[RMDB]
RNA sequence: GGGAACGACUCGAGUAGAGUCGAAAAGGGGUCGACACGAAUGGCUCCGUAUGGAGUAUAACUGAAGCCUCCACGGUUAUACGUUGAAAUACGAGCCACUAUGUCGACGGAGGCACCCAAACUUGAGGUUCUUGUCUUCGGACAAGAACCUCAAGAACGCCUAUACUAGUUUCGACUAGUAUAGGCGAAAAGAAACAACAACAACAAC
Reactivity to 2A3 in 0.01 (KOAc 150mM, MgCl2 10mM, bicine 150mM(pH8.5), 24C), signal-to-noise 2, nucleotides 027 to 156: g040g050g090g030u000c010g000a000c010a010c050g300a300a300u020g000g010c000u070c100c050g000u000a000u030g010g060a010g000u000a000u000a020a000c000u020g050a120a000g020c000c000u000c020c010a010c000g000g030u010u000a010u000a010c050g000u060u020g010a000a000a000u030a030c040g000a000g010c000c020a010c020u030a020u000g000u000c010g000a000c010g000g000a000g010g000c020a030c000c010c000a040a060a070c000u010u010g010a010g020g020u040u000c000u030u000g010u010c040u030u100c300g000g020a040c000a020a000g000a000a000c000c000u000c000a000a000g000a000a000